[RMDB]
RNA sequence: GGGAACGACUCGAGUAGAGUCGAAAAGAUAUGGAAGUCUCGGAUCAGCAACAGCACAGCUCGGAAACGAGCUGUGACAUGCUGGGCACGAGAGCUUCCUAAGUCAAAACCUACCUUCGGGUAGGAACCUAUCACUCAAGUUCGCUUGAGUGAUAGGAAAAGAAACAACAACAACAAC
Reactivity to 2A3 in 0.01 (KOAc 150mM, MgCl2 10mM, bicine 150mM(pH8.5), 24C), signal-to-noise 3, nucleotides 027 to 126: g010a030u070a050u170g000g010a000a000g030u010c000u000c000g050g000a120u070c000a000g010c000a010a140c040a220g060c000a010c000a010g000c010u010c000g030g050a060a050a050c010g000a010g000c010u010g000u000g000a000c000a010u040g000c000u020g000g000g000c300a060c140g000a020g030a030g020c000u000u000c000c010u000a140a010g070u030c030a010a030a170a290c000c000u000a010c000c010u040u110c300g130g000g000u000a000g000g000a000a010
Reactivity to DMS in 0.01 (KOAc 150mM, MgCl2 10mM, bicine 150mM(pH8.5), 24C), signal-to-noise 4, nucleotides 027 to 126: g000a050u020a300u000g000g000a000a010g010u000c000u000c000g010g000a200u020c000a020g000c010a040a110c290a170g000c000a010c000a010g020c000u000c000g000g000a080a130a270c010g010a010g010c000u000g000u000g000a030c050a140u000g010c000u000g000g010g000c150a180c020g010a010g010a060g010c010u000u000c000c000u010a030a080g010u010c050a110a060a170a120c000c000u000a000c000c000u000u000c290g010g000g040u000a000g000g000a030a040